[RMDB]
RNA sequence: GGGAACGACUCGAGUAGAGUCGAAAACCAUUAGCCCGGGCGCUGUUCUUCUCAUUUUUGAAUUUAUGAAAAGUAAGUUGGCACCACCUUUUCCCAAUUCCCAUAUCAAACAGAAAAAAACGCACCUGUCACAAGAGAUGUUCGCAUCUCUUGUGACAAAAGAAACAACAACAACAAC
Reactivity to 2A3 in 0.01 (KOAc 150mM, MgCl2 10mM, bicine 150mM(pH8.5), 24C), signal-to-noise 2, nucleotides 027 to 126: c000c000a000u030u090a000g040c000c000c000g020g040g020c010g000c020u040g020u110u010c000u040u000c020u000c060a050u000u010u060u080u200g150a160a070u110u150u070a110u120g050a070a030a000a110g040u100a030a030g010u050u030g020g000c000a000c000c000a050c020c020u000u000u050u010c010c010c000a050a030u040u030c010c000c000a030u040a080u150c060a120a080a060c120a060g150a080a270a040a000a000a000a030c040g000c020a080c020c000u020
An RNA of 177 nucleotides, treated with 2A3 and read out base by base. Conditions: 150 mM KOAc, 10 mM MgCl2 and 150 mM bicine (pH 8.5), 24 C. It was measured as part of the RMDB library RFM100.